RNA sequence: GGGAACGACUCGAGUAGAGUCGAAAAACAUAGGUUGGGCCAUAGGCGCUGCGGUUCAUGAUCUUGCCCUCGCCAGGACCGCUCCCGUUCUACUACUUGGCGUCGCGGAUACCGGGUUGGAAAACAACUCAUGGUGAAUAUUCGUAUUCACCAUGAGAAAAGAAACAACAACAACAAC
Reactivity to 2A3 in 0.01 (KOAc 150mM, MgCl2 10mM, bicine 150mM(pH8.5), 24C), signal-to-noise 2, nucleotides 027 to 126: a000c050a040u230a050g110g030u020u080g050g050g000c030c030a050u060a100g030g020c030g000c040u030g000c000g020g000u080u140c060a120u160g090a100u020c040u040u090g040c000c020c000u000c020g000c030c010a010g000g010a030c010c030g040c000u010c000c000c000g020u060u030c030u090a140c010u020a000c000u030u060g020g000c020g010u070c040g000c030g050g000a020u040a080c000c030g020g010g010u030u050g060g010a040a090a020a060c030a010a010
Reactivity to DMS in 0.01 (KOAc 150mM, MgCl2 10mM, bicine 150mM(pH8.5), 24C), signal-to-noise 5, nucleotides 027 to 126: a070c080a070u010a070g000g010u000u000g010g000g000c020c040a080u000a090g010g020c060g010c100u010g000c080g010g000u000u000c070a080u000g000a060u000c040u000u000g000c020c020c010u000c060g010c040c030a090g000g000a070c030c030g020c040u000c020c020c020g010u010u000c060u000a120c080u000a080c070u000u000g020g010c040g020u000c070g020c060g010g000a100u010a070c050c030g000g000g000u000u000g010g000a050a040a080a100c120a070a110